[RMDB]
RNA sequence: GGGAACGACUCGAGUAGAGUCGAAAAAAUCAAUUGUCCUCAAGGAAUUUACAGUAAAGGAGAUUGACACCUAAUAAAUCACUGCAGUUCAGUAUGGUAAGUACAUAUUUAGAGGCAAACACCAUGAACAGAAUGAUGGUUACCAGAGACUGGGAAACUAUAAAUUACCUUUCGAGGUAAUUUAUAGAAAAGAAACAACAACAACAAC
Reactivity to DMS in 0.01 (KOAc 150mM, MgCl2 10mM, bicine 150mM(pH8.5), 24C), signal-to-noise 2, nucleotides 027 to 156: a050a090u000c010a030a040u000u000g010u000c030c020u000c010a050a160g050g020a100a050u010u000u000a100c070a070g010u000a080a020a050g000g010a300g000a100u000u000g010a080c110a060c040c060u030a070a170u010a090a100a090u010c080a100c050u000g030c050a160g000u000u000c020a050g020u010a030u010g030g040u000a060a160g020u000a060c020a060u000a050u010u000u000a050g000a130g010g030c010a010a040a060c070a050c020c000a010u000g000a060a270c180a120g000a060a080u000g010a000u010g000g010u010u000a040c030c010a090g010a150g000a130c000u000g000g010g000a100a060a160
Reactivity to 2A3 in 0.01 (KOAc 150mM, MgCl2 10mM, bicine 150mM(pH8.5), 24C), signal-to-noise 3, nucleotides 027 to 156: a030a000u080c050a070a030u060u040g130u130c000c000u050c100a070a010g090g000a130a110u190u210u180a200c080a060g080u180a090a050a020g050g020a030g010a030u000u030g000a020c000a050c000c000u030a060a050u050a140a200a030u180c100a020c080u100g050c050a040g020u100u110c010a000g030u060a090u050g050g000u050a100a070g040u030a050c010a000u170a030u050u090u080a030g000a020g000g000c000a050a060a060c030a010c010c010a080u090g060a050a050c030a070g070a110a020u100g040a020u020g080g000u010u010a010c010c000a000g040a010g010a090c030u010g010g000g000a070a050a000